[RMDB]
RNA sequence: GGGAACGACUCGAGUAGAGUCGAAAAGAGGCCCGUCCCUCCCGAGGUCGUGGGGCCGGAGCCUUAUAAAAGACUUCCACCCUCUCCCCGCUGGCCAAGACACGCCGCUCGUGGACCACGCCAUCUUCCUCCCGGCUGAUUGUGUGGCUGACGGUGCAAUAUUCGAAAAGUUCGCUUUUCGAAUAUUAAAAGAAACAACAACAACAAC
Reactivity to 2A3 in 0.01 (KOAc 150mM, MgCl2 10mM, bicine 150mM(pH8.5), 24C), signal-to-noise 2, nucleotides 027 to 156: g050a000g010g010c010c000c010g000u000c010c010c000u010c020c060c020g110a110g040g050u140c030g020u070g010g010g010g000c050c020g030g010a030g010c020c010u110u040a200u130a100a120a030a000g060a060c030u100u000c050c020a040c030c020c010u000c010u000c010c000c000c010g020c050u040g030g000c020c020a050a040g050a060c020a020c100g020c030c010g040c050u020c030g050u080g020g030a070c020c000a010c010g000c010c000a010u000c010u020u010c000c010u060c030c010c000g010g000c010u000g000a030u020u000g010u000g000u010g010g010c010u020g010a010c000g000g000u020g010c010
Reactivity to DMS in 0.01 (KOAc 150mM, MgCl2 10mM, bicine 150mM(pH8.5), 24C), signal-to-noise 2, nucleotides 027 to 156: g010a090g010g030c010c030c050g020u020c000c020c010u000c030c050c060g020a120g010g020u000c040g040u000g020g020g020g030c050c080g000g010a070g040c010c000u010u000a060u000a090a120a100a100g000a080c030u000u000c020c040a110c030c010c010u000c040u010c020c010c000c060g040c050u000g040g050c040c060a040a140g000a150c030a070c030g010c030c040g020c030u000c020g010u000g020g020a080c040c010a040c030g000c020c040a060u000c050u010u000c010c020u010c060c030c090g000g020c030u000g000a070u000u010g020u020g020u020g010g000c040u000g000a050c030g000g020u000g000c060